Structure probing data (2A3 and DMS) for a 177-nucleotide construct. Source: RMDB library OK2TRN, as collected in RNAgym.
RNA sequence: GGGAACGACUCGAGUAGAGUCGAAAAAUCUUGCUAAACUAGGGUAUAAAAGUAUGACCGUUAACGAAUCACAAGGUAUGACAUUUAGCAAAGUGUUAUUAUACUUGGAUGAUUAUUGCAAAAUCCAUCCUUUAACCGUUUUCGAACGGUUAAAGGAAAAAGAAACAACAACAACAAC
Reactivity to 2A3 in 0.01 (KOAc 150mM, MgCl2 10mM, bicine 150mM(pH8.5), 24C), signal-to-noise 1, nucleotides 027 to 126: a000u020c030u040u030g000c050u090a110a040a140c020u050a050g030g000g010u030a060u020a100a240a060a040g150u090a090u150g030a010c020c000g010u000u020a070a020c070g040a040a000u010c020a020c010a070a000g020g000u030a000u000g030a000c030a010u010u020u110a070g000c130a130a070a000g000u020g010u010u000a030u020u090a040u070a200c010u020u030g080g020a010u040g050a020u030u090a010u030u180g020c020a010a000a010a010u090c060c000a010
Reactivity to DMS in 0.01 (KOAc 150mM, MgCl2 10mM, bicine 150mM(pH8.5), 24C), signal-to-noise 2, nucleotides 027 to 126: a100u020c100u000u000g020c010u010a090a120a090c120u010a070g010g000g020u010a060u010a060a120a110a120g030u000a100u010g000a040c030c010g000u020u000a040a090c170g020a070a020u000c010a060c020a010a020g000g020u000a040u010g000a010c010a010u010u000u000a150g030c240a090a020a010g040u000g000u000u000a020u010u010a040u000a100c040u010u000g000g020a140u000g000a060u000u010a090u000u020g020c030a030a020a050a050u000c030c020a210

Conditions: 150 mM KOAc, 10 mM MgCl2 and 150 mM bicine (pH 8.5), 24 C.
2A3 adducts were read by reverse transcription with SuperScript II with manganese.